[RMDB]
Chemical mapping of a 177-nucleotide RNA with DMS. The DMS profile rests on 2,461 reads. For DMS the reverse transcriptase was MarathonRT.
RNA sequence: GGGAACGACUCGAGUAGAGUCGAAAAGAUAUGGAUCGAGUGGACAUGCUGCCAACAUCAAACAAAAAGGUUCGGAAACGAACCUUUUUGUUUGAUGUUGACAGCAACAGCCACCGAUCCUAAGUCACACUCUAUUAUGCUUCGGCAUAAUAGAGUGAAAAGAAACAACAACAACAAC
Reactivity to DMS in 0.01 (KOAc 150mM, MgCl2 10mM, bicine 150mM(pH8.5), 24C), signal-to-noise 2, nucleotides 027 to 126: g020a040u020a300u010g000g000a020u010c010g000a170g030u000g010g000a080c090a260u000g010c010u000g000c010c000a000a020c010a000u000c000a010a000a000c000a000a010a000a000a000g010g020u020u000c000g010g010a160a060a270c010g000a000a010c000c000u000u000u000u000u000g000u000u010u000g020a000u010g010u000u010g010a010c000a010g000c000a010a010c300a200g000c010c010a000c000c000g010a000u000c000c000u000a000a070g010u000c050a300